Chemical mapping of a 177-nucleotide RNA with DMS and 2A3. It was measured as part of the RMDB library M2PK90. For DMS the reverse transcriptase was MarathonRT. The RNA was probed in 150 mM KOAc, 10 mM MgCl2 and 150 mM bicine (pH 8.5) at 24 C.

[RMDB]
RNA sequence: GGGAACGACUCGAGUAGAGUCGAAAAAAAAAUAGCGUAAUCGACAUUGAGAAUGUACGCUAAGUGUGUGUUGGAUACCUAACGUCCAAUUGAACACACACACAGUUGGACCUAUUGUCGAAAAAAAGUCAUAAAGGAGGUUCGCCUCCUUUAUGACAAAAGAAACAACAACAACAAC
Reactivity to DMS in 0.01 (KOAc 150mM, MgCl2 10mM, bicine 150mM(pH8.5), 24C), signal-to-noise 2, nucleotides 027 to 126: a010a050a020a040a060u000a000g010c010g000u000a010a040u010c020g020a030c010a040u000u010g010a120g030a090a070u020g030u000a020c010g000c000u000a030a070g040u000g000u000g010u000g010u000u000g010g000a070u000a160c110c090u000a110a140c240g010u000c000c000a000a060u000u000g020a110a040c100a010c000a000c000a020c000a040c040a110g010u000u010g000g000a090c030c050u000a080u010u010g010u020c020g010a000a020a080a060a110a010a100
Reactivity to 2A3 in 0.01 (KOAc 150mM, MgCl2 10mM, bicine 150mM(pH8.5), 24C), signal-to-noise 2, nucleotides 027 to 126: a000a000a000a000a000u080a030g010c030g010u040a010a040u020c010g020a010c030a040u100u090g000a030g070a210a090u200g010u040a010c020g000c020u010a070a090g000u000g010u010g010u020g000u030u110g050g000a010u040a090c020c060u050a100a080c060g000u000c000c000a020a010u050u130g150a140a010c000a000c000a000c010a000c000a000c000a100g120u160u160g070g020a010c020c020u040a110u090u050g000u010c010g020a040a000a000a000a000a010a040